This 177-nucleotide RNA was probed chemically with 2A3. For 2A3 the reverse transcriptase was SuperScript II with manganese. For 2A3, 376 sequencing reads were counted. Values cover nucleotides 27 to 126.

RNA sequence: GGGAACGACUCGAGUAGAGUCGAAAAUCAAAUUAACGUUCGUAAAAUCAGCAAAAAACGAGGAUUUUUCGUUCAUAUACCUAACAAGAAAGCCGAUAGUGCGCCGCUAUAUUCGCGCACUAUCGACGUUCACACGCGAGUUCGCUCGCGUGUGAACAAAAGAAACAACAACAACAAC
Reactivity to 2A3 in 0.01 (KOAc 150mM, MgCl2 10mM, bicine 150mM(pH8.5), 24C), signal-to-noise 1, nucleotides 027 to 126: u100c000a060a000a000u110u100a070a080c000g000u010u000c000g000u000a000a000a000a090u000c000a000g060c040a160a080a000a000a000a000c180g010a060g240g000a000u000u000u010u000u010c000g020u000u020c060a000u030a000u040a110c000c000u110a300a140c130a270a080g070a300a170a000g130c040c000g020a000u000a000g000u000g000c000g000c000c160g010c080u210a110u100a180u080u230c110g000c000g000c000a000c000u000a000u000c000g000a000c000